[RMDB]
RNA sequence: GGGAACGACUCGAGUAGAGUCGAAAACGUGGAGUAGGUCGGUAUCGAAGAUUCGGGAGGUUGUUUUUGUCAGGAAGUAGCGCGUUGCCCUCUGACGACUUGUGUGAUUCGCCGCCAGCCGCGCGUACACCGUAAUAAAUUUCGAUUUAUUACGGUGAAAAGAAACAACAACAACAAC
Reactivity to DMS in 0.01 (KOAc 150mM, MgCl2 10mM, bicine 150mM(pH8.5), 24C), signal-to-noise 9, nucleotides 027 to 126: c090g020u000g000g000a080g020u000a050g010g010u000c050g010g010u000a060u000c060g010a080a090g000a140u000u000c080g010g000g010a080g010g010u000u000g000u000u000u000u000u000g010u000c060a070g010g010a060a080g010u000a090g010c040g010c060g010u000u000g000c030c020c020u000c040u000g010a090c040g010a050c080u000u000g010u000g010u010g000a120u010u000c070g010c030c020g000c030c030a080g010c060c040g010c050g010c060g020u000a160
Reactivity to 2A3 in 0.01 (KOAc 150mM, MgCl2 10mM, bicine 150mM(pH8.5), 24C), signal-to-noise 9, nucleotides 027 to 126: c030g030u040g040g020a090g040u140a070g060g050u120c060g020g020u060a050u130c030g030a070a020g030a130u120u080c040g030g040g010a050g030g020u050u050g060u060u110u030u090u130g060u040c030a020g000g070a110a050g040u110a030g040c030g000c040g080u050u090g030c000c020c010u040c030u040g030a030c030g020a030c020u110u070g060u030g020u040g170a090u040u050c030g020c020c000g000c000c000a000g000c010c010g020c000g000c010g010u020a020
This 177-nucleotide RNA was probed chemically with DMS and 2A3. For 2A3, 18,581 sequencing reads were counted.